RNA sequence: GGGAACGACUCGAGUAGAGUCGAAAAGUACCUGACCUAUUCACAUUGGUUGUGGACACUAAUAAAAAUGAUCAGAAGGUGAAUUGCUCACAAUUAUACUUUGUUUUGCCUGUGCAGAUCCAUAUCAGUAGACAUAGAGAAGACAAGAAUUUGCCUACCUGAGUAAUUACUUCGGUAAUUACUCAGGAAAAGAAACAACAACAACAAC
Reactivity to 2A3 in 0.01 (KOAc 150mM, MgCl2 10mM, bicine 150mM(pH8.5), 24C), signal-to-noise 7, nucleotides 027 to 156: g030u040a060c000c000u010g030a040c010c000u080a110u150u180c090a050c050a170u090u150g040g020u020u050g020u100g060g010a010c020a010c110u100a060a140u160a130a080a030a020a030u130g030a050u080c050a030g090a160a010g050g010u030g020a050a060u050u100g030c020u040c050a060c040a050a060u160u100a080u130a170c050u100u090u080g050u040u090u060u060g100c020c010u030g010u040g020c040a020g020a100u020c050c020a040u060a030u160c020a030g090u130a020g050a050c010a040u060a010g060a020g030a100a010g030a020c020a020a030g070a080a110u100u050u110g020c010c010u060a050
Reactivity to DMS in 0.01 (KOAc 150mM, MgCl2 10mM, bicine 150mM(pH8.5), 24C), signal-to-noise 2, nucleotides 027 to 156: g060u000a060c050c030u000g020a040c040c000u000a080u000u000c060a130c070a140u000u000g020g010u000u000g030u000g000g040a120c080a190c130u000a040a120u020a030a070a050a140a040u000g010a070u000c030a100g000a100a090g030g020u000g010a050a100u000u000g020c030u010c030a080c060a040a090u000u000a140u000a110c050u010u000u000g040u000u000u010u000g020c010c020u000g030u000g010c030a090g000a070u000c060c040a080u000a070u010c050a130g040u000a130g010a050c050a060u000a070g010a090g020a050a070g010a040c040a030a060g010a060a110u000u000u000g030c040c040u010a190

This 207-nucleotide RNA was probed chemically with 2A3 and DMS. The data come from the RNA Mapping Database (RMDB), library OK3TST. The RNA was probed in 150 mM KOAc, 10 mM MgCl2 and 150 mM bicine (pH 8.5) at 24 C. In probing experiments dimethyl sulfate is read out at A N1 and C N3, which are open when not base-paired. Reactivities are rounded to 0.1 and cut off at 0 and 3.